[RMDB]
RNA sequence: GGGAACGACUCGAGUAGAGUCGAAAAAGCUUAACAUGUAUUAACUGGGCAGCGAUGCGGAAACACCUGGCUGAAUUAAGUGUAAAUAAAGCACAUUUUAACCUUUCCUUGCUCGUGAACCGCUCCCCGGAGGCCGGGCUCGCCCCACACGAGGGCCUCAGGGUGAAUCUUUCGAGAUUCACCCUGAAAAAGAAACAACAACAACAAC
Reactivity to 2A3 in 0.01 (KOAc 150mM, MgCl2 10mM, bicine 150mM(pH8.5), 24C), signal-to-noise 1, nucleotides 027 to 156: a000g080c070u100u030a100a000c050a040u070g100u230a150u190u040a130a060c020u020g010g010g000c000a000g010c000g050a030u140g030c040g010g120a120a060a040c070a000c050c060u060g020g000c000u020g040a140a060u170u150a250a150g030u010g050u070a090a160a050u250a120a110a150g070c030a060c030a150u000u030u070u140a020a010c020c030u000u090u130c030c020u050u120g000c020u000c010g050u000g100a110a090c010c000g030c070u020c040c050c000c010g040g000a050g030g050c020c040g030g020g020c050u000c030g000c000c000c000c000a030c000a020c020g080a090g060g090g000c020c010
The record gives the reactivity of an RNA of 207 nucleotides to 2A3.
For 2A3, 366 sequencing reads were counted.